The data come from the RNA Mapping Database (RMDB), library RFMREP.
This 177-nucleotide RNA was probed chemically with 2A3 and DMS.
Conditions: 150 mM KOAc, 10 mM MgCl2 and 150 mM bicine (pH 8.5), 24 C.
[RMDB]
RNA sequence: GGGAACGACUCGAGUAGAGUCGAAAAAGAGUGUUAUGAUGUUGGAGGCGACUCCGAGUCUAGCUCUGCUUUCCCUGCUAAAGAUGGCUUUAGCAGGCUGUCGCAUGGAGUCUUCGGACUCCAUGCGUCUAUAUAGAUGCUUCGGCAUCUAUAUAGAAAAAGAAACAACAACAACAAC
Reactivity to 2A3 in 0.01 (KOAc 150mM, MgCl2 10mM, bicine 150mM(pH8.5), 24C), signal-to-noise 3, nucleotides 027 to 126: a000g040a020g010u080g030u150u170a120u260g010a000u040g130u300u100g000g010a010g000g020c060g050a080c020u000c000c020g030a010g000u000c020u000a010g000c000u000c010u010g030c010u030u020u040c000c010c010u000g010c010u030a060a050a130g040a200u300g190g290c000u010u000u000a000g000c020a010g080g030c070u140g040u200c020g000c000a010u010g020g000a010g010u000c030u070u100c250g160g030a020c000u000c010c010a000u000g000c000g000
Reactivity to DMS in 0.01 (KOAc 150mM, MgCl2 10mM, bicine 150mM(pH8.5), 24C), signal-to-noise 6, nucleotides 027 to 126: a010g000a040g010u000g010u000u000a040u010g000a010u000g010u010u010g000g010a030g000g010c300g000a250c000u010c000c000g010a070g010u000c000u000a090g000c000u000c000u000g000c170u010u000u000c070c000c000u000g010c010u000a010a020a020g010a300u010g020g010c010u000u000u000a010g010c010a040g000g020c260u000g000u000c020g010c000a010u000g000g000a030g010u010c000u000u020c210g030g000a010c010u000c010c000a000u000g000c000g010